[RMDB]
RNA sequence: GGGAACGACUCGAGUAGAGUCGAAAAGGAGAUCGAAGAUGACCGACGUCAGCACGGUCUGGAUGUAGGUCCGCAUGCAUCCGAGUUGACGAAACUUAACGAUUUCCAAAGCGGACAAGAAGUCAAAACGUAUAUGAUCCUUCGGGAUCAUAUACGUAAAAGAAACAACAACAACAAC
Reactivity to DMS in 0.01 (KOAc 150mM, MgCl2 10mM, bicine 150mM(pH8.5), 24C), signal-to-noise 3, nucleotides 027 to 126: g030g020a030g000a000u020c010g020a190a050g010a160u020g000a020c000c040g000a190c030g010u030c120a160g020c080a160c000g000g010u000c020u020g010g010a010u010g030u010a020g000g000u000c000c010g000c000a050u010g000c030a010u040c000c000g000a010g000u000u000g010a110c240g000a140a020a000c010u000u000a060a190c030g000a000u000u010u000c010c020a120a060a110g000c010g040g020a010c020a190a060g000a100a120g000u010c120a030a010a140
Reactivity to 2A3 in 0.01 (KOAc 150mM, MgCl2 10mM, bicine 150mM(pH8.5), 24C), signal-to-noise 5, nucleotides 027 to 126: g020g000a000g000a000u000c010g040a070a050g070a120u180g020a020c010c030g040a060c040g110u240c080a050g050c180a030c030g000g030u010c020u020g000g000a000u000g010u010a000g000g030u000c000c000g000c000a000u000g000c000a000u000c000c000g000a000g000u010u040g060a130c180g070a050a000a000c010u040u010a070a060c010g000a000u000u000u000c000c010a060a060a030g000c000g000g000a000c010a020a060g110a070a010g100u130c110a060a080a030